[RMDB]
Annotation
The data come from the RNA Mapping Database (RMDB), library OK3TST. An RNA of 207 nucleotides, treated with DMS and 2A3 and read out base by base.
RNA sequence: GGGAACGACUCGAGUAGAGUCGAAAACACACUCAGGAUGUUCAGGAAGCACCAGUUGCUGCAGAAGUGACUAGGAAGAGUCACAGAGGUCUUGGGGAAUCCGUAUCUUGGGUACAGAAUGGGGCAGUUUCAGUGUCUGCGGAGCACCACAUUUGUGCGUCUAAGUGCUAUUCGUAGCACUUAGACGAAAAGAAACAACAACAACAAC
Reactivity to DMS in 0.01 (KOAc 150mM, MgCl2 10mM, bicine 150mM(pH8.5), 24C), signal-to-noise 1, nucleotides 027 to 156: c010a180c030a130c030u000c010a040g000g020a070u050g020u000u000c080a100g000g000a100a170g020c000a180c000c080a150g040u010u000g020c010u000g030c050a100g000a190a210g020u000g010a060c040u020a130g020g000a180a130g020a100g070u000c020a010c000a150g020a110g030g000u010c080u000u000g040g020g010g000a130a090u010c030c050g030u010a050u000c030u000u000g020g000g110u000a060c150a090g050a070a030u000g000g000g030g050c020a170g040u000u010u000c060a100g020u000g000u000c140u000g000c010g070g010a030g040c050a090c020c010a100c050a170u000u000u000g000u000g040
Reactivity to 2A3 in 0.01 (KOAc 150mM, MgCl2 10mM, bicine 150mM(pH8.5), 24C), signal-to-noise 3, nucleotides 027 to 156: c080a000c000a020c010u070c010a040g040g000a040u040g070u240u110c040a030g040g010a070a040g050c050a040c050c010a040g030u140u070g050c040u050g000c030a030g040a240a010g070u010g030a000c020u020a060g030g100a060a040g040a010g030u040c000a000c000a040g070a050g000g050u010c050u110u070g030g010g010g020a020a060u040c020c000g020u050a030u040c030u010u060g040g000g000u060a030c050a060g100a060a080u090g020g010g010g000c020a040g030u050u070u090c050a030g050u030g040u070c010u070g020c030g010g010a010g020c010a010c050c000a040c030a090u060u080u080g060u070g020
DMS (dimethyl sulfate) methylates the pairing face of unpaired adenines and cytosines.